[RMDB]
RNA sequence: GGGAACGACUCGAGUAGAGUCGAAAAUGGGCUGUCUCAGUACGCCAGGAUGUUCACCCCGUACCGGAAUGCCGUGGGCAGAAGUGCGCACAGCGGCACGAUGGCACGGCGUGCCGCGCGUGGCGUAUCUAUCUUGCGGGUUCGCCCGCAAGAUAGAAAAAGAAACAACAACAACAAC
Reactivity to 2A3 in 0.01 (KOAc 150mM, MgCl2 10mM, bicine 150mM(pH8.5), 24C), signal-to-noise 2, nucleotides 027 to 126: u110g010g030g030c050u120g060u110c030u010c090a070g060u040a000c010g040c000c020a010g130g000a100u120g030u130u080c020a100c000c000c020c020g030u050a060c000c020g070g070a090a070u070g030c000c000g050u090g040g010g050c040a050g030a270a020g140u060g020c060g040c050a030c030a100g050c000g010g000c020a000c020g000a020u050g050g000c040a000c040g000g000c010g000u000g010c020c060g000c020g030c050g050u040g040g000c000g000u020a020
Reactivity to DMS in 0.01 (KOAc 150mM, MgCl2 10mM, bicine 150mM(pH8.5), 24C), signal-to-noise 3, nucleotides 027 to 126: u010g010g000g010c030u010g020u010c020u010c050a100g010u000a040c050g000c040c040a060g000g030a070u000g020u010u000c060a130c050c020c000c020g010u010a040c090c030g020g010a130a070u010g010c030c000g020u020g000g020g000c040a040g000a100a130g010u010g000c020g000c040a050c100a190g010c030g020g010c000a010c000g000a200u010g000g000c010a030c030g000g000c020g000u000g000c040c020g010c030g000c100g020u000g000g010c020g030u010a060
The record gives the reactivity of an RNA of 177 nucleotides to 2A3 and DMS. The 2A3 profile rests on 2,506 reads. The RNA was probed in 150 mM KOAc, 10 mM MgCl2 and 150 mM bicine (pH 8.5) at 24 C.